An RNA of 177 nucleotides, treated with DMS and 2A3 and read out base by base. The DMS profile rests on 1,105 reads.
RNA sequence: GGGAACGACUCGAGUAGAGUCGAAAAGUUUGAAAUAGCGAAACAGGAGACACUCGGCUGGGGUAGCAAGGACUUAAUCGCCUUUAAGGCCCCGAACACGGUGAAUGCGCGUCCAAACAUCACCAGAACGCUUUUAUCAUUUCGAUGAUAAAAGCGUAAAAGAAACAACAACAACAAC
Reactivity to DMS in 0.01 (KOAc 150mM, MgCl2 10mM, bicine 150mM(pH8.5), 24C), signal-to-noise 2, nucleotides 027 to 126: g000u010u000u000g020a040a080a090u040a150g020c010g000a110a050a170c100a070g000g030a110g000a170c040a010c090u010c050g020g020c090u000g010g010g010g020u000a070g020c180a040a020g010g010a100c050u010u010a080a090u000c240g000c030c000u000u000u000a110a190g050g000c010c020c000c020g000a060a080c150a060c070g050g000u000g030a110a150u010g000c030g000c090g010u000c040c040a040a070a070c050a040u000c050a100c030c050a160g000a080
Reactivity to 2A3 in 0.01 (KOAc 150mM, MgCl2 10mM, bicine 150mM(pH8.5), 24C), signal-to-noise 1, nucleotides 027 to 126: g030u010u030u030g130a070a070a060u180a090g020c010g040a090a050a050c100a120g000g120a030g080a030c020a010c030u060c070g120g000c050u060g040g000g030g010u000a040g040c030a010a010g010g000a010c000u030u090a000a060u100c080g030c000c000u000u080u040a080a060g070g000c000c020c020c070g010a040a010c040a000c040g050g010u030g040a080a020u060g070c070g000c010g020u060c000c010a000a030a000c010a030u050c010a040c120c010a060g040a010
Description: 2A3 adducts were read by reverse transcription with SuperScript II with manganese.